RNA sequence: GGGAACGACUCGAGUAGAGUCGAAAAGUGAACCUUGUCAGGUCCGGAAGGAAGCAGCAAUAAGCGGGUUCUCUCGUGUGCCGUAGGAGUGCCUGAACUGAGCUAACUGCUUGAGUAACGCUUAUGGCUUACGGAGAUGUUUCGACAUCUCCGUAAGAAAAGAAACAACAACAACAAC
Reactivity to DMS in 0.01 (KOAc 150mM, MgCl2 10mM, bicine 150mM(pH8.5), 24C), signal-to-noise 7, nucleotides 027 to 126: g000u010g010a090a080c050c020u000u010g000u010c040a150g000g010u010c020c020g010g050a120a100g010g010a050a060g020c040a150g020c020a070a060u010a070a070g010c070g000g000g000u010u010c050u010c020u000c040g020u010g010u010g010c030c030g020u010a070g000g000a070g010u010g000c060c040u000g010a060a070c100u010g000a060g000c020u010a100a120c130u010g000c020u010u000g010a050g010u000a100a120c090g000c030u000u010a030u000g010g000
Reactivity to 2A3 in 0.01 (KOAc 150mM, MgCl2 10mM, bicine 150mM(pH8.5), 24C), signal-to-noise 8, nucleotides 027 to 126: g100u090g040a030a060c010c010u060u060g080u070c030a020g010g040u010c000c030g050g050a040a050g080g030a060a010g010c040a000g000c030a060a110u090a200a000g030c020g010g030g000u100u030c030u020c010u020c050g080u130g060u110g120c040c020g020u070a060g020g080a040g020u050g020c010c010u040g020a050a060c030u030g010a010g020c020u050a050a060c020u060g010c020u030u020g040a040g060u040a070a020c060g010c020u070u050a060u190g080g010
Description:
The record gives the reactivity of an RNA of 177 nucleotides to DMS and 2A3. DMS adducts were read by reverse transcription with MarathonRT. Values cover nucleotides 27 to 126. 2A3 adducts were read by reverse transcription with SuperScript II with manganese.